[RMDB]
RNA sequence: GGGAACGACUCGAGUAGAGUCGAAAAGUGGAUUUGUUCGCAAAUCCACAAAUCCCAACAAGCCUGGCUGGCAGCCUAACAACCGAGCUACGCCGCGUAGCAAAAGGUUACACUUCGGUGUAACCAAGAACAUCCUCUUGUUCGCAAGAGGAUGUUCAAAAGAAACAACAACAACAAC
Reactivity to 2A3 in 0.01 (KOAc 150mM, MgCl2 10mM, bicine 150mM(pH8.5), 24C), signal-to-noise 2, nucleotides 027 to 126: g010u000g010g010a000u000u010u000g010u020u030c020g000c120a000a010a000u000c010c000a000c010a010a000a000u000c000c000c000a010a030c030a010a000g100c020c040u070g000g020c000u020g040g030c060a020g000c000c060u090a040a030c030a010a010c020c020g090a040g030c000u040a000c000g120c160c070g230c130g000u010a010g000c000a040a050a000a050g000g000u000u010a000c020a000c000u050u110c210g110g000u000g010u000a000a010c000c010a010a030
Reactivity to DMS in 0.01 (KOAc 150mM, MgCl2 10mM, bicine 150mM(pH8.5), 24C), signal-to-noise 2, nucleotides 027 to 126: g000u020g000g000a010u020u000u000g010u000u000c190g010c000a040a000a010u000c000c000a030c000a010a090a150u000c020c000c000a150a160c140a110a070g000c060c020u000g020g010c000u000g000g000c050a090g020c010c030u000a040a080c190a040a050c030c020g020a150g000c020u000a020c060g030c090c100g030c120g060u000a010g040c010a090a060a090a110g000g010u000u000a000c000a000c000u020u000c250g030g040u000g000u000a020a010c000c010a040a080